[RMDB]
RNA sequence: GGGAACGACUCGAGUAGAGUCGAAAACAAUCAUUAACGUAUUUUACUUCUGUAGUAAUGCCCGUUAUUUGUUGGUAUACAGGAAUCCAACCUCCAUCUUAACAAAACAAAACAAAACAAAAACAAAGACGUAGCAUGAGUUCGCUCAUGCUACGUCAAAAGAAACAACAACAACAAC
Reactivity to 2A3 in 0.01 (KOAc 150mM, MgCl2 10mM, bicine 150mM(pH8.5), 24C), signal-to-noise 3, nucleotides 027 to 126: c060a020a110u250c060a070u090u040a020a000c020g030u020a110u040u160u020u010a030c010u070u060c110u120g230u230a000g020u030a030a020u070g060c030c040c040g030u020u010a080u050u150u090g040u030u030g000g060u070a100u040a110c070a070g000g050a040a020u000c000c000a030a040c030c020u040c010c010a110u060c040u130u170a100a070c080a060a110a020a000c120a030a070a050a000c060a020a100a000a050c050a020a100a030a030a000c120a130a140a040